This 177-nucleotide RNA was probed chemically with 2A3. Reactivities are rounded to 0.1 and cut off at 0 and 3. As a SHAPE reagent, 2A3 marks flexible, mostly unpaired nucleotides at the ribose 2'-OH. The data come from the RNA Mapping Database (RMDB), library OK1LIB. 2A3 adducts were read by reverse transcription with SuperScript II with manganese.
[RMDB]
RNA sequence: GGGAACGACUCGAGUAGAGUCGAAAACUUCACCACCAUGCCGGUGCUUGCCCUUGCGACCUGGCAAUUCCGUCGGGCGUCGAAUUGGACCUAUCGGCGGGCGCGGCACCGGUUGGGGACGGUAACCGAGCAUCUGACGUUUCGACGUCAGAUGCUCAAAAGAAACAACAACAACAAC
Reactivity to 2A3 in 0.01 (KOAc 150mM, MgCl2 10mM, bicine 150mM(pH8.5), 24C), signal-to-noise 3, nucleotides 027 to 126: c010u090u070c040a050c020c000a040c020c000a080u240g050c000c000g000g010u020g000c000u090u300g000c010c000c000u000u240g130c100g060a190c020c030u030g030g000c030a030a070u290u060c090c100g010u030c030g040g060g070c050g040u020c010g060a060a120u080u100g140g040a150c010c060u150a130u130c030g020g000c000g000g000g000c050g000c020g040g000c000a000c000c000g010g000u000u000g000g000g010g040a020c090g020g010u010a020a000c040c060